[RMDB]
RNA sequence: GGGAACGACUCGAGUAGAGUCGAAAAGACGUAAUCCGCGCAAAUCCACAAACGCCAACGAUGAGCGUUUCGCUGUAGCCGCUUAAGGCAUCAGCCGGGGCCGCCUGAGCCCUGUUACCAAAGACGGGAAACUCGAUGCCAUUCGUGGCAUCGAGAAGCUGAGAUUAUUCUUCGGAAUAAUCUCAGCAAAAGAAACAACAACAACAAC
Reactivity to 2A3 in 0.01 (KOAc 150mM, MgCl2 10mM, bicine 150mM(pH8.5), 24C), signal-to-noise 3, nucleotides 027 to 156: g050a020c020g040u040a030a090u060c060c040g000c000g030c060a040a060a110u090c080c030a100c080a060a070a000c060g000c010c020a130a040c160g170a190u160g030a060g030c000g020u020u060u060c050g000c010u010g020u090a070g030c000c020g040c120u230u210a150a100g010g000c000a020u000c000a010g000c000c020g000g000g000g000c000c040g010c020c000u020g000a000g010c000c000c000u030g070u110u080a050c040c030a030a010a000g110a030c040g000g000g000a080a010a010c000u010c000g000a000u000g010c000c000a030u110u080c210g070u070g000g000c000a000u000c000g000a000g000a000a000

This 207-nucleotide RNA was probed chemically with 2A3. The RNA was probed in 150 mM KOAc, 10 mM MgCl2 and 150 mM bicine (pH 8.5) at 24 C. The 2A3 profile rests on 2,135 reads.